Structure probing data (2A3 and DMS) for a 207-nucleotide construct.
DMS adducts were read by reverse transcription with MarathonRT.
Conditions: 150 mM KOAc, 10 mM MgCl2 and 150 mM bicine (pH 8.5), 24 C.

RNA sequence: GGGAACGACUCGAGUAGAGUCGAAAAUACCGCAGGCCUGCGGUGCGGCAGUGUGGAGACCUGCCGGAAGCCGUGUUGUUUUGACAACCGGGAGAAAGCGUAUGCGGAGGCAGCGCUUUCAGGGUCUAAAAGUAUGGGAUCUUCGGAUCCCAUACAACAAGUAUUCCCUGUUCGCAGGGAAUACUUGAAAAGAAACAACAACAACAAC
Reactivity to 2A3 in 0.01 (KOAc 150mM, MgCl2 10mM, bicine 150mM(pH8.5), 24C), signal-to-noise 4, nucleotides 027 to 156: u080a000c000c000g000c010a030g000g030c010c040u020g000c010g000g000u010g010c010g000g000c010a010g000u060g030u100g290g060a050g030a100c010c000u000g020c000c010g000g020a030a010g050c020c020g070u100g010u140u000g020u020u100u090u250g080a020c020a020a000c010c000g000g010g000a040g000a000a000a000g010c000g000u040a300u230g020c030g040g100a050g300g000c000a000g000c000g000c000u000u000u000c000a010g000g000g010u000c000u010a080a070a030a060g000u000a000u000g000g000g000a000u010c030u030u070c240g040g000a000u000c020c000c000a000u000a000c000a000a000
Reactivity to DMS in 0.01 (KOAc 150mM, MgCl2 10mM, bicine 150mM(pH8.5), 24C), signal-to-noise 1, nucleotides 027 to 156: u000a110c030c010g050c060a060g020g010c040c050u000g020c000g000g070u000g050c050g020g010c010a030g040u010g000u010g040g060a260g000a080c160c000u000g000c050c000g000g000a060a160g020c010c010g020u000g020u010u000g020u000u010u010u000g000a100c040a010a000c000c020g030g000g050a150g000a020a020a020g000c000g060u010a070u010g020c020g050g030a230g000g090c000a080g000c000g010c000u000u010u000c010a020g030g020g000u010c030u000a100a090a080a180g030u000a030u000g000g020g020a030u000c010u000u010c250g040g010a020u000c000c010c010a000u000a000c000a020a130